[RMDB]
RNA sequence: GGGAACGACUCGAGUAGAGUCGAAAAGCAUCACACCCUGCUUCUGCAGCUUGGCGGAUUGUGGACUCUGAAAUACCACCGUCAAUUUCGAUAGUCACGUCUAGAUUGCGUUCAUCAAUAAUUCGACGAAGUUGACGGACCUUCUCUAAUUGCUCCAUGACCAGGAUUUAUUCGUAAAUCCUGGUCAAAAAGAAACAACAACAACAAC
Reactivity to DMS in 0.01 (KOAc 150mM, MgCl2 10mM, bicine 150mM(pH8.5), 24C), signal-to-noise 2, nucleotides 027 to 156: g020c040a080u010c060a160c030a110c020c000c020u000g010c030u010u000c090u010g020c030a080g010c100u000u000g020g040c090g020g010a090u000u000g040u000g040g010a150c050u000c060u000g020a100a070a090u000a150c050c040a130c010c020g010u000c030a060a030u000u000u010c020g000a130u000a090g030u020c100a070c060g030u000c030u000a170g010a170u000u000g010c040g010u000u010c080a140u000c090a060a110u000a050a200u010u000c030g030a170c020g010a030a090g000u010u000g010a040c000g030g000a050c060c040u010u000c030u000c010u000a080a140u010u000g000c010u010c030c010a300
Reactivity to 2A3 in 0.01 (KOAc 150mM, MgCl2 10mM, bicine 150mM(pH8.5), 24C), signal-to-noise 4, nucleotides 027 to 156: g060c010a050u090c040a010c000a030c030c010c000u010g020c000u000u090c050u170g010c020a020g030c010u050u040g020g020c040g010g010a050u060u090g030u040g030g020a040c010u010c020u130g030a040a040a030u150a050c010c090a060c020c000g000u000c000a000a000u020u000u000c020g050a060u040a150g050u100c050a010c090g000u030c020u030a120g060a260u050u130g020c010g060u110u090c060a130u040c030a030a090u110a140a080u100u090c070g030a020c010g000a040a000g000u010u000g000a000c000g000g010a000c000c010u060u010c010u000c010u070a080a070u170u070g030c000u030c020c020a000